This 177-nucleotide RNA was probed chemically with 2A3 and DMS.
It was measured as part of the RMDB library OK2TST.
For DMS the reverse transcriptase was MarathonRT.
[RMDB]
RNA sequence: GGGAACGACUCGAGUAGAGUCGAAAAGGACACUCUAGUGAUGAGUUAGCAAAGUUCAACUUGUUCAUGGAUGUUAAAGCUAUGUCUGAGUUGACUCUGGGAUCAGUCAUUCAGGUAAUGGGCAAGAGUAUCAAGAGCGAUUCGUCGCUCUUGAUACAAAAGAAACAACAACAACAAC
Reactivity to 2A3 in 0.01 (KOAc 150mM, MgCl2 10mM, bicine 150mM(pH8.5), 24C), signal-to-noise 3, nucleotides 027 to 126: g070g000a010c020a000c060u070c030u060a040g080u020g080a090u020g000a010g050u030u070a050g060c060a100a080a040g000u110u020c020a010a030c040u030u010g000u060u030c010a020u030g040g040a030u040g080u270u230a160a060a000g040c020u030a020u090g030u000c010u000g040a020g030u010u040g030a010c010u000c070u130g100g050g000a050u070c010a010g030u000c000a010u000u020c010a000g040g040u070a140a050u070g020g040g000c030a020a020g020a020
Reactivity to DMS in 0.01 (KOAc 150mM, MgCl2 10mM, bicine 150mM(pH8.5), 24C), signal-to-noise 4, nucleotides 027 to 126: g020g010a090c110a030c040u000c030u000a070g010u010g030a070u000g010a050g010u000u000a110g010c050a090a070a100g000u000u010c060a040a070c020u010u000g000u000u000c020a050u000g010g010a040u000g010u010u010a060a070a130g010c020u000a050u000g000u000c010u010g010a020g000u000u000g020a010c030u000c080u010g010g000g000a060u010c130a090g000u000c010a020u000u000c060a020g000g010u000a060a060u000g000g000g010c040a060a060g000a160

Conditions: 150 mM KOAc, 10 mM MgCl2 and 150 mM bicine (pH 8.5), 24 C.